[RMDB]
RNA sequence: GGGAACGACUCGAGUAGAGUCGAAAACGGAAGCAUUAAAACCAUUCGAGCUAGUCAAAGCGUGGCGUGUCUCUCCGCAGCGUGUUGGCGAAUGUAAAGAGUGACUAAGCAUGUAGUACCGAGGAUGAUAAGAGCAAUUCGUUCGCGAAUUGCUCAACGCCAUUGGUUAGUUCGCUAACCAAUGGCGAAAAGAAACAACAACAACAAC
Reactivity to 2A3 in 0.01 (KOAc 150mM, MgCl2 10mM, bicine 150mM(pH8.5), 24C), signal-to-noise 2, nucleotides 027 to 156: c040g010g000a030a010g050c020a010u090u000a020a020a020a120c020c010a040u040u060c060g070a030g000c040u130a030g030u080c030a050a100a010g000c030g030u020g040g070c010g020u050g090u000c050u070c010u060c100c010g000c040a000g030c000g010u030g070u080u060g070g020c030g040a040a050u110g040u140a100a040a010g030a010g010u030g000a020c010u020a020a000g090c020a010u100g000u080a030g050u000a080c010c030g010a060g030g070a050u060g010a000u100a120a110g000a000g000c010a000a010u000u010c000g010u050u000c130g010c000g110a020a000u000u000g020c000u000c000a010a010
This 207-nucleotide RNA was probed chemically with 2A3. Conditions: 150 mM KOAc, 10 mM MgCl2 and 150 mM bicine (pH 8.5), 24 C.